[RMDB]
RNA sequence: GGGAACGACUCGAGUAGAGUCGAAAAGGGGUCCUCCGGAAGCGCUGGUUGUCAGCUACCCAGGCUGAAGCCUCCACGGCCUGAGCGUAGCUUGGAUUUACCAGCGAUAACGGAGGACGGAGGCACCCAAAGGAUUGACGGUUCGCCGUCAAUCCAACAAUGUACCGCAGUUCGCUGCGGUACAUUGAAAAGAAACAACAACAACAAC
Reactivity to 2A3 in 0.01 (KOAc 150mM, MgCl2 10mM, bicine 150mM(pH8.5), 24C), signal-to-noise 2, nucleotides 027 to 156: g090g020g000g010u000c000c000u000c000c000g010g010a280a070g080c000g010c020u020g010g030u040u010g030u080c050a010g000c000u000a000c010c000c000a010g040g030c000u000g040a070a040g050c000c000u060c010c020a040c000g000g010c000c000u060g070a100g060c190g020u000a010g000c030u020u180g080g010a000u090u050u300a020c000c000a010g000c000g000a000u000a000a000c000g010g000a000g000g000a000c000g000g000a000g000g050c030a040c030c000c000a040a100a020g010g000a020u000u000g000a010c000g000g040u030u090c290g020c140c010g000u020c000a000a000u010c000c000a000a010